[RMDB]
RNA sequence: GGGAACGACUCGAGUAGAGUCGAAAAGGGCAGUUUUACCGCCGUAGUUUUUUUAUUAUGUUUGACGACGGAAAGGGUUGCAUAGUUACCGAGCAACCAGGUAACGUUCGUCGUUGCGGGCUGCCCAGGCCGCAGUGAUCUUCGGGUCGCUGUGGCCAAAAGAAACAACAACAACAAC
Reactivity to DMS in 0.01 (KOAc 150mM, MgCl2 10mM, bicine 150mM(pH8.5), 24C), signal-to-noise 9, nucleotides 027 to 126: g000g000g000c010a010g010u010u020u040u040a100c000c000g020c010c020g020u000a000g010u000u000u040u050u040u060u020a020u020u000a020u000g000u020u040u040g010a000c000g000a020c000g000g000a070a110a140g010g000g010u000u010g010c020a080u040a140g010u020u040a090c220c090g000a180g000c020a020a020c010c010a040g000g010u030a060a130c060g000u020u010c010g010u000c000g010u020u010g010c000g010g000g000c010u000g000c010c000c010a050
Reactivity to 2A3 in 0.01 (KOAc 150mM, MgCl2 10mM, bicine 150mM(pH8.5), 24C), signal-to-noise 9, nucleotides 027 to 126: g000g000g000c010a010g010u020u070u160u190a050c000c000g000c000c000g000u010a010g000u000u020u030u030u110u050u070a100u070u020a040u050g150u030u150u270g010a000c000g000a000c000g010g070a130a060a080g100g000g000u010u010g000c020a030u070a160g120u120u130a140c080c070g010a020g010c000a010a010c000c000a010g100g100u090a070a020c030g020u060u080c000g000u020c000g000u000u030g000c000g000g010g000c000u000g000c000c000c000a000